Record summary:
This 207-nucleotide RNA was probed chemically with 2A3 and DMS. For DMS the reverse transcriptase was MarathonRT. The reactions ran in a buffer of 150 mM KOAc, 10 mM MgCl2 and 150 mM bicine (pH 8.5), at 24 C.
RNA sequence: GGGAACGACUCGAGUAGAGUCGAAAAGCAACUUACGAUUUUAGGCUCCCCGUGCGUGUCUCGAACCAUGCCGGGCCAAACCCACGGGGGCUGGCGGUCCCCGUGCGGUCAAAAUCAAACCGCUGGAAAAACAGUUCUAGCUUCGGCUAGAACUGAAGCACAUAUUUAAGUUCGCUUAAAUAUGUGCAAAAGAAACAACAACAACAAC
Reactivity to 2A3 in 0.01 (KOAc 150mM, MgCl2 10mM, bicine 150mM(pH8.5), 24C), signal-to-noise 5, nucleotides 027 to 156: g010c030a060a110c050u150u150a080c130g080a140u080u080u050u160a080g030g000c030u110c040c030c000c020g050u150g040c020g010u040g020u010c090u070c220g080a060a030c040c000a000u020g010c000c000g020g010g000c000c020a060a050a020c000c000c010a000c000g010g000g000g000g000c010u010g000g000c000g010g000u010c010c000c000c000g000u000g010c060g000g010u020c020a040a060a030a110u090c030a120a120a110c000c010g000c010u020g040g010a090a100a010a000a000c000a000g000u000u000c000u000a000g010c000u040u060c230g090g000c000u000a000g000a000a000c000u000g000a000a010
Reactivity to DMS in 0.01 (KOAc 150mM, MgCl2 10mM, bicine 150mM(pH8.5), 24C), signal-to-noise 1, nucleotides 027 to 156: g030c070a050a070c030u000u010a070c040g010a090u000u000u030u010a300g010g020c030u000c010c030c000c030g050u010g060c000g040u010g020u000c060u000c120g010a110a200c100c020a020u000g030c050c040g000g000g030c030c020a050a200a120c030c020c000a000c040g000g010g020g040g020c020u000g020g030c110g050g010u010c010c010c000c010g050u000g000c010g030g020u000c030a010a010a040a060u000c040a070a090a140c060c020g030c020u020g000g000a070a120a050a110a180c000a020g020u000u000c000u000a010g010c010u000u010c300g070g010c000u000a010g020a000a000c000u000g000a030a160